[RMDB]
RNA sequence: GGGAACGACUCGAGUAGAGUCGAAAAACUGACGAAGACACCCAUUCCAGUGGACCACUGUGACCCAGGAGGCAUUCAGCCAUCAUGAUGUGGCCUUUACCUCCACUCCUGUCUUGUUCUACCCAGAGUGUAAAAUUAAGUUCGCUUAAUUUUACACAAAAGAAACAACAACAACAAC
Reactivity to 2A3 in 0.01 (KOAc 150mM, MgCl2 10mM, bicine 150mM(pH8.5), 24C), signal-to-noise 8, nucleotides 027 to 126: a000c060u070g030a020c070g130a040a020g050a020c010a030c030c020c020a030u100u030c020c010a020g040u050g040g100a100c050c030a020c070u070g060u120g080a060c030c010c030a050g010g020a010g020g000c020a030u090u080c030a050g010c000c010a040u070c030a070u210g130a130u190g050u020g020g010c000c000u030u060u040a040c000c010u000c000c000a020c020u020c010c020u030g010u010c000u030u080g030u060u020c030u060a080c000c010c010a020g040a010
Reactivity to DMS in 0.01 (KOAc 150mM, MgCl2 10mM, bicine 150mM(pH8.5), 24C), signal-to-noise 8, nucleotides 027 to 126: a080c100u000g010a060c090g010a090a080g010a080c080a070c060c040c030a130u010u000c050c030a070g010u010g010g010a110c110c040a060c040u000g010u000g000a070c110c030c060a130g010g010a040g000g010c050a050u000u010c200a130g000c010c010a030u000c100a120u000g010a110u010g030u010g000g010c020c080u000u000u000a050c040c010u000c010c010a180c070u000c030c030u000g010u000c030u000u000g000u000u000c050u000a160c010c010c020a110g000a180
About this RNA
Structure probing data (2A3 and DMS) for a 177-nucleotide construct. For DMS the reverse transcriptase was MarathonRT. Conditions: 150 mM KOAc, 10 mM MgCl2 and 150 mM bicine (pH 8.5), 24 C. The DMS profile rests on 10,861 reads.